[RMDB]
Structure probing data (DMS and 2A3) for a 177-nucleotide construct. For DMS, 1,867 sequencing reads were counted. DMS (dimethyl sulfate) methylates the pairing face of unpaired adenines and cytosines. 2A3 adducts were read by reverse transcription with SuperScript II with manganese. Source: RMDB library RFM100, as collected in RNAgym.
RNA sequence: GGGAACGACUCGAGUAGAGUCGAAAACCUGUAACAGGUCUGUUGCGUGUGCGUUUUUAUUUGACGAAUUCUGACCGAUAUUGGUAGCACAUGAAUCCCAUCGUAAUUAACAGAUUGCAGCGUAAGCGUCACGGGGAUCUUUCGAGAUCCCCGUGACAAAAGAAACAACAACAACAAC
Reactivity to DMS in 0.01 (KOAc 150mM, MgCl2 10mM, bicine 150mM(pH8.5), 24C), signal-to-noise 2, nucleotides 027 to 126: c010c000u020g010u030a080a060c250a160g030g030u000c050u010g020u000u000g000c030g050u000g030u000g000c110g000u050u000u020u010u010a070u030u000u000g030a090c070g040a020a060u070u000c040u000g000a060c140c020g000a120u030a100u000u000g010g020u000a120g010c080a040c110a090u010g070a040a150u010c000c000c000a170u000c180g000u050a060a060u010u040a030a070c070a090g010a050u000u010g000c070a110g030c130g060u070a110a100g000c120
Reactivity to 2A3 in 0.01 (KOAc 150mM, MgCl2 10mM, bicine 150mM(pH8.5), 24C), signal-to-noise 2, nucleotides 027 to 126: c000c000u000g010u080a110a080c130a140g060g040u070c030u070g050u090u160g010c030g010u030g020u010g010c160g130u000u000u000u020u110a200u060u040u060g140a030c040g070a100a110u190u080c070u100g070a080c010c010g000a030u000a120u230u100g070g000u040a000g030c000a050c020a060u060g060a020a000u060c000c000c000a050u090c000g020u090a090a090u060u100a180a050c000a000g020a070u000u110g020c020a040g000c050g140u130a100a000g060c000
The RNA was probed in 150 mM KOAc, 10 mM MgCl2 and 150 mM bicine (pH 8.5) at 24 C.